RNA sequence: GGGAACGACUCGAGUAGAGUCGAAAACUACAACAUGGAUGAAUCUUGGAAACAUGUCUGUGAAGGAAGGCAGCCACAGAAGACACAUAUUGUAUGAUUCUGUUUACGUGAAAUGUCUAGAAUAGGCGUUGUCUGAAGUGUUCGCACUUCAGACAACAAAAGAAACAACAACAACAAC
Reactivity to DMS in 0.01 (KOAc 150mM, MgCl2 10mM, bicine 150mM(pH8.5), 24C), signal-to-noise 2, nucleotides 027 to 126: c040u000a040c070a010a040c040a030u000g000g000a120u000g000a120a120u000c050u000u010g000g000a080a120a100c060a050u010g020u000c050u000g010u000g020a120a150g000g040a100a060g010g000c000a050g020c060c050a030c050a040g010a030a040g010a130c210a060c050a100u000a070u000u030g010u010a040u000g000a190u000u010c040u040g000u010u000u020a060c200g000u000g010a070a050a060u010g010u000c010u000a060g010a050a130u000a050g000g000c080
Reactivity to 2A3 in 0.01 (KOAc 150mM, MgCl2 10mM, bicine 150mM(pH8.5), 24C), signal-to-noise 1, nucleotides 027 to 126: c010u100a070c010a090a000c010a060u070g060g060a150u100g060a170a040u080c050u130u130g070g070a100a080a000c030a140u090g000u020c040u040g020u030g070a020a040g100g000a020a100g050g000c000a010g020c030c070a040c000a020g080a070a000g060a000c020a000c040a090u080a040u120u160g070u040a020u170g070a120u040u000c010u000g080u040u060u100a020c070g000u040g050a030a080a000u070g020u000c000u020a050g140a240a080u070a130g050g110c030
This 177-nucleotide RNA was probed chemically with DMS and 2A3. The DMS profile rests on 1,375 reads. It was measured as part of the RMDB library OK2TRN.